[RMDB]
Chemical mapping of a 177-nucleotide RNA with 2A3 and DMS. 2A3 adducts were read by reverse transcription with SuperScript II with manganese.

RNA sequence: GGGAACGACUCGAGUAGAGUCGAAAAUUACGACUGAACGUAUUGAUAUCUGGAAUGUUGACGAGCGGUCAGCUUCGGACACCUGCAAUUAAAACCUCCGCAGUACAUUCUGAGCAGCCUCCACAAGCCCAUAAGAUGCUUUCGAGCAUCUUAUGGGAAAAGAAACAACAACAACAAC
Reactivity to 2A3 in 0.01 (KOAc 150mM, MgCl2 10mM, bicine 150mM(pH8.5), 24C), signal-to-noise 5, nucleotides 027 to 126: u130u070a030c010g010a010c070u090g070a180a020c050g020u040a090u100u060g090a110u070a050u170c030u040g040g080a090a100u080g020u070u140g070a070c060g010a030g070c010g020g070u050c050a030g020c040u050u060c010g060g000a020c030a030c010c020u010g000c020a050a190u050u120a160a120a020a050c000c010u020c020c050g000c020a000g030u060a040c010a040u050u030c000u020g000a020g010c000a000g010c010c000u040c020c000a040c020a110a040g010
Reactivity to DMS in 0.01 (KOAc 150mM, MgCl2 10mM, bicine 150mM(pH8.5), 24C), signal-to-noise 2, nucleotides 027 to 126: u050u030a040c140g000a130c060u010g010a020a090c070g000u000a040u020u020g000a110u030a070u020c040u050g040g020a090a080u000g000u000u010g000a210c100g000a110g000c080g000g040u000c000a060g000c060u030u000c020g000g020a090c080a120c020c000u010g000c030a030a090u000u000a030a150a100a150c070c040u010c040c000g000c020a060g020u020a110c100a030u000u000c090u020g000a070g000c000a030g000c010c010u000c030c030a030c070a080a140g000